Source: RMDB library RFM100, as collected in RNAgym. This 177-nucleotide RNA was probed chemically with 2A3. The reactions ran in a buffer of 150 mM KOAc, 10 mM MgCl2 and 150 mM bicine (pH 8.5), at 24 C. The 2A3 profile rests on 720 reads. 2A3 adducts were read by reverse transcription with SuperScript II with manganese.

RNA sequence: GGGAACGACUCGAGUAGAGUCGAAAAACAUCAUCUUAAAACAGCCCGCAAAACCGUCUUAUUCACGAAGGGCUUACUGCCUGCGCGCGCACAUUCCAACGGCUUGCCUGCCCCGGAUGAACUGUUGGAGAAGACAAAGCUUCGGCUUUGUCUUCUCAAAAGAAACAACAACAACAAC
Reactivity to 2A3 in 0.01 (KOAc 150mM, MgCl2 10mM, bicine 150mM(pH8.5), 24C), signal-to-noise 2, nucleotides 027 to 126: a000c000a040u050c010a030u050c070u100u300a000a020a000a140c020a010g030c060c030c000g010c100a110a060a000a000c030c000g020u030c100u210u220a230u170u120c010a000c090g110a090a030g070g010g000c000u000u020a000c000u000g000c000c000u040g020c030g000c000g000c000g080c010a010c000a150u050u090c020c000a060a030c040g020g000c000u110u040g070c000c000u030g030c000c000c000c000g000g020a010u030g050a010a090c090u130g030u020u010g040